[RMDB]
RNA sequence: GGGAACGACUCGAGUAGAGUCGAAAAACCGGAAAACGCUCGGUGAUGUAGCGUAGCAACGCCAAUCGUUCAUCUUUCGACAAGUACACCAUAAUACCCUCAGCAAUGAACAAGGCCAGAGGCGCGAGUGCUAAUACCAGUUCGCUGGUAUUAGCACAAAAGAAACAACAACAACAAC
Reactivity to 2A3 in 0.01 (KOAc 150mM, MgCl2 10mM, bicine 150mM(pH8.5), 24C), signal-to-noise 2, nucleotides 027 to 126: a000c030c000g060g000a070a080a010a010c050g010c050u000c040g040g050u130g070a060u130g050u140a030g000c000g050u020a020g040c070a050a090c020g030c020c000a040a070u070c030g040u080u070c000a070u020c010u020u100u060c050g040a070c020a100a010g020u020a010c010a060c070c000a010u000a130a070u110a190c010c000c000u030c020a040g020c060a050a080u090g020a090a040c020a060a020g070g020c010c030a020g050a070g090g000c030g000c030g070a040
Reactivity to DMS in 0.01 (KOAc 150mM, MgCl2 10mM, bicine 150mM(pH8.5), 24C), signal-to-noise 2, nucleotides 027 to 126: a080c020c020g000g000a100a060a150a090c110g030c100u000c030g000g000u000g000a120u000g000u010a030g030c050g040u000a090g010c120a060a070c100g000c020c070a040a110u000c060g000u010u010c070a060u000c050u000u010u000c090g030a040c070a010a080g020u000a070c040a110c010c010a030u000a080a080u000a130c100c010c020u000c020a020g020c050a090a050u000g000a060a080c050a060a070g010g020c010c030a050g000a060g000g010c080g000c060g030a100